[RMDB]
RNA sequence: GGGAACGACUCGAGUAGAGUCGAAAAUUGGCUAAGACCCAUGUUGCUGAAAAGCUGGCCAAGGUGCUUGGGUCCCAUGAUUGUGUGUCCUUUGAACAAGCUAUAUCCAGUGAUAUUAUUCCCAUGAAUUGGGACACAUCCCCAGGGAUUAAGUACAUAUCUAUGCGGGAUUCGUCCCGCAUAGAUAAAAAGAAACAACAACAACAAC
Reactivity to DMS in 0.01 (KOAc 150mM, MgCl2 10mM, bicine 150mM(pH8.5), 24C), signal-to-noise 2, nucleotides 027 to 156: u000u000g010g010c040u000a120a100g010a210c040c000c010a150u030g020u000u000g010c000u000g010a120a080a070a170g050c070u000g010g020c000c030a110a160g040g050u000g040c040u010u000g030g040g010u000c020c010c000a010u010g010a060u000u010g010u000g010u010g000u000c020c020u000u010u000g000a120a110c080a050a080g020c070u000a080u000a070u000c000c070a200g020u000g000a040u000a060u000u000a130u000u000c000c010c020a160u000g010a100a220u000u000g000g020g020a030c060a050c010a080u000c020c030c000c030a300g000g000g020a030u020u000a030a080g000u000a040c040a300
Reactivity to 2A3 in 0.01 (KOAc 150mM, MgCl2 10mM, bicine 150mM(pH8.5), 24C), signal-to-noise 2, nucleotides 027 to 156: u050u020g030g000c010u070a080a000g030a140c020c020c010a020u140g050u090u180g000c040u040g010a040a030a000a060g110c070u040g010g000c000c010a000a060g000g010u020g010c000u060u060g140g040g030u030c000c010c040a100u050g030a130u110u180g000u000g010u000g010u090c040c010u060u090u200g040a060a040c050a080a070g030c000u020a000u000a040u150c040c020a100g010u080g150a010u010a040u140u080a100u140u000c030c050c080a030u090g030a060a120u180u120g000g000g000a000c000a010c000a030u110c050c010c000c050a010g000g000g010a010u030u110a110a030g070u150a050c020a080